[RMDB]
Chemical mapping of a 177-nucleotide RNA with 2A3 and DMS. The reactions ran in a buffer of 150 mM KOAc, 10 mM MgCl2 and 150 mM bicine (pH 8.5), at 24 C. The DMS profile rests on 3,792 reads.
RNA sequence: GGGAACGACUCGAGUAGAGUCGAAAAGCAGGCGCUGUGCGACCGACUGGAGCGGCUCACCGACGAGCAGGCGCGGCAGCUACUGGGAAGCUUCCAGGCAUGCGCUGCCUCCGCCUGGCAGGGCGGCCACCUUCCUCAGGUUCGCCUGAGGAAGGUGAAAAGAAACAACAACAACAAC
Reactivity to 2A3 in 0.01 (KOAc 150mM, MgCl2 10mM, bicine 150mM(pH8.5), 24C), signal-to-noise 3, nucleotides 027 to 126: g050c070a030g120g000c070g000c060u110g030u110g100c010g050a110c020c010g020a060c050u080g060g040a060g080c010g030g000c050u060c050a070c000c020g110a090c030g000a010g100c010a020g000g010c030g010c000g030g010c000a000g030c020u070a050c010u010g000g000g090a130a100g150c130u170u060c010c000a020g030g040c080a080u240g080c060g010c040u010g000c030c000u070c040c010g000c000c010u010g040g000c040a030g030g040g020c020g010g000c010
Reactivity to DMS in 0.01 (KOAc 150mM, MgCl2 10mM, bicine 150mM(pH8.5), 24C), signal-to-noise 4, nucleotides 027 to 126: g020c060a070g000g010c080g020c040u000g010u000g010c090g020a080c030c020g000a100c060u010g000g020a120g030c040g000g010c040u000c050a130c040c040g010a090c120g000a140g030c030a020g000g000c030g010c300g000g010c010a030g000c000u000a060c040u000g020g010g010a110a160g010c210u010u010c000c010a020g000g010c190a070u010g020c160g020c010u000g000c000c000u000c100c020g030c020c000u000g000g020c070a110g010g010g020c040g010g000c130